Description: An RNA of 177 nucleotides, treated with DMS and 2A3 and read out base by base. High 2A3 reactivity points to a flexible backbone, as in loops and unpaired stretches. For DMS the reverse transcriptase was MarathonRT. It was measured as part of the RMDB library OK2TST.
[RMDB]
RNA sequence: GGGAACGACUCGAGUAGAGUCGAAAAAGAGCAUGCCCCUGAGCACCGGACCGUUGUUUCCAUGUCUUAGGAUGAAACAAUGCAUAGCUGUGGUAAGAAAUCUAAGCUGUAUGGAGCUGUAAAAGAAGCCUAUUAUAAUAUUCGUAUUAUAAUAGGCAAAAGAAACAACAACAACAAC
Reactivity to DMS in 0.01 (KOAc 150mM, MgCl2 10mM, bicine 150mM(pH8.5), 24C), signal-to-noise 6, nucleotides 027 to 126: a090g010a110g020c040a050u000g000c030c030c010c040u010g000a060g010c030a070c110c060g010g000a070c190c050g000u010u000g010u000u000u010c040c300a090u010g020u010c040u000u010a060g020g010a080u000g010a080a040a040c050a040a050u000g000c070a070u000a060g010c050u000g010u000g000g010u010a080a070g010a060a090a060u010c040u010a120a070g010c040u000g010u010a080u010g010g010a080g020c030u000g020u000a040a030a060a140g010a130a140
Reactivity to 2A3 in 0.01 (KOAc 150mM, MgCl2 10mM, bicine 150mM(pH8.5), 24C), signal-to-noise 3, nucleotides 027 to 126: a000g080a000g000c020a020u070g010c000c010c000c020u030g040a020g010c020a020c020c040g040g000a010c010c030g020u030u030g010u000u040u000c050c050a060u080g100u010c010u030u070a060g020g070a030u070g020a030a010a000c030a020a050u070g000c030a040u070a050g000c030u050g020u060g070g030u040a050a060g070a090a110a010u020c030u040a080a000g020c010u010g030u070a070u060g000g010a000g000c010u010g040u160a040a040a050a030g180a100a010

Conditions: 150 mM KOAc, 10 mM MgCl2 and 150 mM bicine (pH 8.5), 24 C.